[RMDB]
RNA sequence: GGGAACGACUCGAGUAGAGUCGAAAACGUCGUGAACUAGCGACAAUGCAUUAGGUCCAUCGUUAUCUAACCGAAACAUCGUGACUAGUGUUAGAAUAGAACCAGGAGAGGACGCUGGCAAACAAAGACGGAGUGUAUCCUUCGGGGUACGCUCCGUAAAAGAAACAACAACAACAAC
Reactivity to 2A3 in 0.01 (KOAc 150mM, MgCl2 10mM, bicine 150mM(pH8.5), 24C), signal-to-noise 9, nucleotides 027 to 126: c070g000u010c010g010u030g090a150a090c090u050a100g000c010g010a000c000a020a050u080g010c020a030u030u090a030g030g030u010c010c000a060u030c070g040u040u050a100u070c020u020a020a040c030c020g050a060a050a050c060a090u180c100g110u120g090a060c050u060a060g020u020g000u120u030a020g020a080a080u090a050g060a040a040c040c030a030g010g060a100g020a050g030g010a000c020g000c020u010g010g000c020a040a050a020c040a020a120a020g110
Reactivity to DMS in 0.01 (KOAc 150mM, MgCl2 10mM, bicine 150mM(pH8.5), 24C), signal-to-noise 9, nucleotides 027 to 126: c130g000u000c040g010u010g000a110a120c170u020a130g000c020g010a030c020a120a120u010g010c030a050u010u020a040g010g010u010c010c020a100u000c080g010u010u010a090u010c030u000a040a040c120c060g000a130a090a070c080a090u020c130g010u020g010a080c070u010a060g010u020g010u000u000a050g000a050a130u020a060g010a070a090c100c110a080g000g000a090g010a110g000g010a040c040g010c010u000g000g000c080a050a070a070c170a070a080a090g000